[RMDB]
RNA sequence: GGGAACGACUCGAGUAGAGUCGAAAACAGGACGAGGAGCAUUACCGGAGCGGUUUCCGCCACCUGGGCGUGGAGCAGGACGAGGACCGCUAGAGAAUGGGUUAUUUGCUACACGUGGUGCACGUCCCUUCACAAGAGUUUUCGAACUCUUGUGAAGAAAAGAAACAACAACAACAAC
Reactivity to DMS in 0.01 (KOAc 150mM, MgCl2 10mM, bicine 150mM(pH8.5), 24C), signal-to-noise 6, nucleotides 027 to 126: c080a130g010g010a040c020g000a100g010g010a090g020c010a040u000u010a080c040c030g010g000a090g020c010g000g000u000u000u010c010c020g000c070c080a070c050c020u010g010g020g010c070g020u010g000g000a090g020c040a050g000g010a140c100g000a140g000g010a030c010c010g020c030u000a060g000a080g000a100a080u010g000g000g010u000u000a100u000u010u000g010c020u000a060c040a080c070g020u010g000g010u000g020c050a090c070g000u000c010c010
Reactivity to 2A3 in 0.01 (KOAc 150mM, MgCl2 10mM, bicine 150mM(pH8.5), 24C), signal-to-noise 6, nucleotides 027 to 126: c040a020g000g060a000c010g010a050g100g060a090g010c010a010u020u100a040c010c040g040g010a010g000c010g030g000u030u080u050c020c010g020c030c020a100c020c030u100g050g140g020c080g060u110g030g040a040g040c050a040g020g030a040c060g040a120g040g030a010c010c000g030c070u020a010g040a010g020a130a100u170g090g000g000u090u090a180u100u130u150g030c020u050a050c040a000c060g040u050g030g030u030g000c030a010c040g030u010c040c020